Overview: Chemical mapping of a 207-nucleotide RNA with 2A3 and DMS. It was measured as part of the RMDB library OK3TST. For DMS the reverse transcriptase was MarathonRT. Reactivities are given for positions 27 through 156. In probing experiments dimethyl sulfate is read out at A N1 and C N3, which are open when not base-paired. The DMS profile rests on 7,871 reads. The RNA was probed in 150 mM KOAc, 10 mM MgCl2 and 150 mM bicine (pH 8.5) at 24 C.
[RMDB]
RNA sequence: GGGAACGACUCGAGUAGAGUCGAAAAGAACUGCCAAAAUUAGCAGUCAGGUAAGUCGCCUUUACUGUCCUACAAACUUUAUGGCAAAAAAGCAUGAUUUCCUGUGCAUACAGUCCUAGAGUUGUUUUGCAAUUAUAGUGAGAUGAUGGGUAUUUAGACAAUCACAGUCAUUCGUGACUGUGAUUGUAAAAGAAACAACAACAACAAC
Reactivity to 2A3 in 0.01 (KOAc 150mM, MgCl2 10mM, bicine 150mM(pH8.5), 24C), signal-to-noise 4, nucleotides 027 to 156: g030a020a020c020u020g000c010c030a120a080a090a170u080u080a090g010c010a000g010u050c030a010g010g050u100a080a090g080u130c080g060c020c000u060u040u070a070c050u070g090u130c010c020u040a050c060a020a090a020c010u060u160u150a070u130g010g010c000a030a030a010a030a060a040g050c070a050u140g010a110u060u060u090c000c010u050g020u040g020c010a020u050a140c020a010g070u040c000c030u090a060g020a010g070u020u020g050u010u080u090u100g020c010a000a020u120u030a040u070a080g060u100g050a050g010a050u080g010a020u040g080g000g030u070a110u070u210u050a050g010
Reactivity to DMS in 0.01 (KOAc 150mM, MgCl2 10mM, bicine 150mM(pH8.5), 24C), signal-to-noise 4, nucleotides 027 to 156: g000a050a040c020u000g020c000c030a050a090a170a160u020u000a080g040c010a040g010u000c070a050g020g020u000a040a080g020u000c070g020c030c030u000u000u000a070c050u000g010u000c030c030u000a300c070a070a070a110c070u010u000u000a060u020g020g020c020a000a060a060a070a060a050g010c030a030u000g030a070u010u000u000c010c010u010g020u000g000c050a130u000a060c050a070g020u010c010c030u000a080g010a110g020u000u000g000u000u000u000u000g000c010a030a100u000u000a080u000a070g030u000g010a110g000a050u000g010a080u000g010g010g000u000a070u010u000u000a170g000